[RMDB]
RNA sequence: GGGAACGACUCGAGUAGAGUCGAAAACUUUAGCAGCUUAAUAACCUGCAUUUAGCCUUCGCUCCCCAGCUUCCGCUCGUAAGACGGGGAUCAAGCGGAGUCAAACCUAAACGAGAUCGUGUGGACGCUUCGGCUUGGAGAUCGAAACACUAAAUUGGAGCUUGUAAAUCUUCGGAUUUACAAGCUCAAAAGAAACAACAACAACAAC
Reactivity to 2A3 in 0.01 (KOAc 150mM, MgCl2 10mM, bicine 150mM(pH8.5), 24C), signal-to-noise 2, nucleotides 027 to 156: c030u100u110u080a030g000c000a000g000c000u050u010a030a030u070a020a050c000c030u020g040c040a190u150u090u120a040g010c010c000u000u000c020g000c010u040c020c000c000c000a000g040c000u010u000c010c010g020c030u010c030g030u010a020a000g050a120c000g000g000g010g000a000u060c150a080a020g010c000g010g020a010g000u050c060a020a120a190c030c050u110a050a000a000c010g010a000g000a060u180c090g010u020g010u050g030g020a010c060g000c050u000u000c040g210g060c050u100u290g030g020a060g010a050u140c040g050a040a030a000c060a020c030u090a160a040a110u100u150g100

Overview
The record gives the reactivity of an RNA of 207 nucleotides to 2A3. For 2A3, 1,090 sequencing reads were counted. The data come from the RNA Mapping Database (RMDB), library RSTRND.